[RMDB]
Structure probing data (2A3) for a 207-nucleotide construct. The RNA was probed in 150 mM KOAc, 10 mM MgCl2 and 150 mM bicine (pH 8.5) at 24 C. The 2A3 profile rests on 854 reads.

RNA sequence: GGGAACGACUCGAGUAGAGUCGAAAACAGAGCUGAUGGGCCAUGUACCUAUCCAGAAUGAGAUCCCAUCUUGCACACUGUGCUAAUUUGAGAUUCUCAUGCCUCCUACUUGGAGAGAUCUGGACUACUAACUGUAUGACGUUCGCGUCAUACAGAAGCAGACUCAUGACUUCGGUCAUGAGUCUGCAAAAGAAACAACAACAACAAC
Reactivity to 2A3 in 0.01 (KOAc 150mM, MgCl2 10mM, bicine 150mM(pH8.5), 24C), signal-to-noise 2, nucleotides 027 to 156: c000a000g000a000g030c020u030g040a090u090g040g050g000c040c010a120u110g000u090a130c020c000u010a060u000c000c000a000g000a090a010u000g010a030g000a000u020c040c010c000a040u000c060u040u010g020c000a010c010a100c250u300g000u000g020c090u140a080a080u000u010u040g050a060g000a040u270u070c010u000c000a040u050g020c000c000u010c050c000u120a290c090u090u280g000g000a010g000a000g000a040u020c000u000g000g070a000c000u060a020c010u060a300a020c000u000g000u000a000u000g000a000c000g000u000u130c270g010c020g040u000c000a000u000a000c020a000g000a020a000